[RMDB]
Source: RMDB library TTRINS, as collected in RNAgym. Chemical mapping of a 177-nucleotide RNA with DMS and 2A3. For 2A3, 8,668 sequencing reads were counted. Values cover nucleotides 27 to 126. The DMS profile rests on 4,684 reads. The reactions ran in a buffer of 150 mM KOAc, 10 mM MgCl2 and 150 mM bicine (pH 8.5), at 24 C. 2A3 adducts were read by reverse transcription with SuperScript II with manganese.

RNA sequence: GGGAACGACUCGAGUAGAGUCGAAAAGAUAUGGAUCAUGGUAGACAUGAUCUAGUGCCGUUGUCUUGGUUUCGGAAACGAAAUGCAAGACAACGGCACUAGAUCAACAGCUACGUGAUCCUAAGUCCCUUCCAUAAAAGUUCGCUUUUAUGGAAGGAAAAGAAACAACAACAACAAC
Reactivity to DMS in 0.01 (KOAc 150mM, MgCl2 10mM, bicine 150mM(pH8.5), 24C), signal-to-noise 2, nucleotides 027 to 126: g020a110u000a290u000g010g010a010u000c000a020u000g020g040u000a000g000a100c100a210u000g000a010u010c000u000a000g000u010g020c000c000g000u000u000g020u020c000u000u000g000g000u000u010u000c010g000g010a110a090a300c030g000a000a010a000u000g010c030a020a020g000a010c010a000a000c000g000g000c000a000c000u000a000g000a010u000c000a030a080c300a220g000c000u000a000c000g020u000g000a000u000c000c000u000a020a090g010u010c060
Reactivity to 2A3 in 0.01 (KOAc 150mM, MgCl2 10mM, bicine 150mM(pH8.5), 24C), signal-to-noise 2, nucleotides 027 to 126: g060a040u120a050u260g010g000a010u000c010a010u070g300g060u060a010g120a170c020a070u010g000a010u010c000u000a000g000u010g010c000c010g000u000u020g010u000c010u000u060g060g000u030u020u030c020g090g040a150a100a140c060g090a030a020a020u260g190c000a000a000g000a000c000a000a000c000g010g010c020a000c010u000a000g000a000u000c000a000a000c030a000g020c000u010a000c020g000u000g000a000u020c000c000u020a090a020g010u000c020